[RMDB]
RNA sequence: GGGAACGACUCGAGUAGAGUCGAAAAUCAUAGCUUCACCAGCGCGACCUGGUCCUCCACGAGCUGGCCCGCGGCCGCGAGCUCAGCUUUUACCUUCCCGCCCACCUCCUCGCGCAGGUAGACCGAAAGUAAAAAGAGAUUUCGAUCUCUUUUUACUAAAAGAAACAACAACAACAAC
Reactivity to 2A3 in 0.01 (KOAc 150mM, MgCl2 10mM, bicine 150mM(pH8.5), 24C), signal-to-noise 2, nucleotides 027 to 126: u080c010a030u060a130g040c040u120u100c050a030c060c000a020g000c040g000c020g050a060c000c020u030g010g050u020c000c000u000c010c010a030c050g020a000g030c020u020g000g030c000c010c010g020c030g090g060c180c170g010c040g000a010g010c020u050c270a000g000c000u050u010u070u060a080c010c010u030u030c010c000c020g010c000c000c000a060c010c000u050c000c020u020c010g020c000g000c000a010g000g020u030a020g010a020c020c030g050a130a130
Reactivity to DMS in 0.01 (KOAc 150mM, MgCl2 10mM, bicine 150mM(pH8.5), 24C), signal-to-noise 5, nucleotides 027 to 126: u000c080a090u010a110g010c050u000u000c070a060c040c030a080g010c020g020c050g000a080c090c070u000g010g010u000c020c020u000c030c040a100c180g000a030g020c020u000g000g000c010c010c030g020c040g020g020c180c140g000c020g000a030g000c010u010c010a020g010c020u000u000u000u000a090c090c070u000u000c020c000c030g000c040c020c030a090c040c020u000c030c030u000c030g020c030g020c040a050g010g000u000a050g010a130c060c040g000a080a070